RNA sequence: GGGAACGACUCGAGUAGAGUCGAAAAUCAAGGAACACCUGUUCAACAAGCACCACAUCAACAGACAUCACAUCAACAGACAUCACAGCAACCAACACAACAAGAACAAAGUAAUCCAUUUGAGAACUUUGAUGCUAAUAACAUUGACGAUUCUCAAGGCUUCUAUUAGUUUCGACUAAUAGAAGCCAAAAGAAACAACAACAACAAC
Reactivity to DMS in 0.01 (KOAc 150mM, MgCl2 10mM, bicine 150mM(pH8.5), 24C), signal-to-noise 2, nucleotides 027 to 156: u000c030a150a050g000g020a110a120c040a110c110c020u000g030u010u000c020a080a110c030a100a170g020c050a090c010c010a010c040a120u000c030a050a160c020a060g010a060c010a030u000c020a080c100a060u000c030a040a060c020a100g000a060c010a040u000c000a080c050a080g040c030a050a110c010c000a060a070c110a130c060a060a070c050a100a080g000a140a100c050a030a090a060g020u010a030a160u030c020c030a160u010u000u000g000a040g010a030a050c000u000u000u010g040a020u000g010c000u010a110a120u010a060a010c010a000u000u000g000a010c120g010a210u010u000c000u010c000a010a170
Reactivity to 2A3 in 0.01 (KOAc 150mM, MgCl2 10mM, bicine 150mM(pH8.5), 24C), signal-to-noise 4, nucleotides 027 to 156: u060c010a020a060g080g000a050a010c010a020c050c020u050g040u040u050c050a070a060c020a070a030g040c030a050c050c000a020c020a050u070c030a010a110c020a020g080a060c010a060u070c020a040c010a070u070c040a050a060c010a030g100a060c020a030u050c030a030c020a060g050c000a030a060c040c010a060a010c020a040c010a160a070c030a080a050g080a130a010c030a110a090a010g050u080a070a040u050c060c030a110u060u040u080g030a030g000a010a010c010u020u010u020g020a020u030g010c000u010a040a030u100a190a000c010a010u000u030g010a000c020g180a230u040u010c020u000c000a010a040
This 207-nucleotide RNA was probed chemically with DMS and 2A3. The DMS profile rests on 2,131 reads. For 2A3 the reverse transcriptase was SuperScript II with manganese. Conditions: 150 mM KOAc, 10 mM MgCl2 and 150 mM bicine (pH 8.5), 24 C. DMS adducts were read by reverse transcription with MarathonRT.